[RMDB]
RNA sequence: GGGAACGACUCGAGUAGAGUCGAAAACCAGUCCGUGGGAACUACCCCGGAACUCCCGCUCUCCACACUCCUUCCCCCCGCGGGCCCCCCAAUUCAGAGCCAAGAACCCACCCAUCGGGGUCCGACGACGCCGAUAGGUUCGCCUAUCGGAAAAGAAACAACAACAACAAC
Reactivity to DMS in 0.01 (KOAc 150mM, MgCl2 10mM, bicine 150mM(pH8.5), 24C), signal-to-noise 9, nucleotides 027 to 129: c010c040a110g020u000c030c040g030u070g000g010g000a170a130c210u040a180c100c000c000c000g000g020a070a080c080u020c030c010c030g000c060u000c020u020c030c020a060c090a080c080u020c020c020u040u000c010c000c000c010c020c020g000c040g020g020g000c000c010c000c000c070c070a080a100u010u010c110a040g030a090g040c000c000a080a100g030a110a060c010c010c010a110c040c020c030a050u050c120g010g000g020g010u000c010c040g000a090c080g020a110c140g040
Reactivity to 2A3 in 0.01 (KOAc 150mM, MgCl2 10mM, bicine 150mM(pH8.5), 24C), signal-to-noise 9, nucleotides 027 to 129: c010c000a000g060u020c010c000g050u280g020g010g020a170a170c090u120a090c100c000c010c010g020g010a040a030c040u020c000c010c000g020c000u010c010u020c030c010a040c010a060c040u050c020c000u020u040c000c000c000c000c000c020g010c010g000g000g000c010c000c000c000c000c000a010a000u080u060c020a030g020a010g090c030c010a060a020g030a030a020c020c000c000a040c010c050c000a050u080c040g010g000g010g030u000c000c000g030a060c040g010a000c020g030